[RMDB]
RNA sequence: GGGAACGACUCGAGUAGAGUCGAAAAGCUGUUCUGUGAGAUGACCUUGGAGUUCAAUGACGUAAUUGCAGCCUUGAUGAGCGUCUCACGAUCCUCUAUUUCGAUAUUAAUGCUCAUAUCCUCAAGGGCACUGCCGGAUGUUCGCAUCCGGCAGUGCAAAAGAAACAACAACAACAAC
Reactivity to 2A3 in 0.01 (KOAc 150mM, MgCl2 10mM, bicine 150mM(pH8.5), 24C), signal-to-noise 2, nucleotides 027 to 126: g000c020u030g090u060u010c040u170g050u030g000a070g000a030u040g060a080c000c030u060u080g000g010a040g000u190u000c000a050a120u190g130a160c080g140u230a140a050u100u050g050c060a030g020c060c040u100u100g040a120u050g010a050g030c000g000u000c010u000c000a020c000g010a010u050c050c040u030c020u010a300u080u110u010c020g020a010u010a060u030u190a030a010u140g000c000u000c060a010u070a040u140c000c070u080c060a030a030g100g000
This 177-nucleotide RNA was probed chemically with 2A3. The reactions ran in a buffer of 150 mM KOAc, 10 mM MgCl2 and 150 mM bicine (pH 8.5), at 24 C. 2A3 adducts were read by reverse transcription with SuperScript II with manganese.